[RMDB]
RNA sequence: GGGAACGACUCGAGUAGAGUCGAAAACUGCAGGUCAACGGACGUUCUUCAGAUCAGCUAUUGCAGAAGAAAGGUCAGCCAAGCGCUCUGGGCCAUGUCGACUGUAUAUAGGAGCUUCUGAUUUCAACCAGAAGCUAACUCUCUCCGAAACAAUGAGGUAAUGGACGUGAUUCGUCACGUCCAUUACAAAAGAAACAACAACAACAAC
Reactivity to 2A3 in 0.01 (KOAc 150mM, MgCl2 10mM, bicine 150mM(pH8.5), 24C), signal-to-noise 2, nucleotides 027 to 156: c040u060g010c020a020g000g030u020c050a070a000c060g080g030a050c010g030u030u000c000u050u030c020a040g040a270u030c050a000g030c010u070a030u120u170g000c040a010g020a080a000g010a030a050a000g030g000u060c040a010g010c000c040a170a060g000c020g050c060u020c080u050g090g010g000c010c030a110u140g020u040c030g010a050c010u040g070u140a050u010a010u050a240g070g030a000g040c010u010u000c000u000g100a140u080u180u200c050a030a050c010c000a020g010a000a000g040c000u000a030a030c000u000c000u000c010u000c020c030g070a060a060a010c090a070a120u170g030a020g130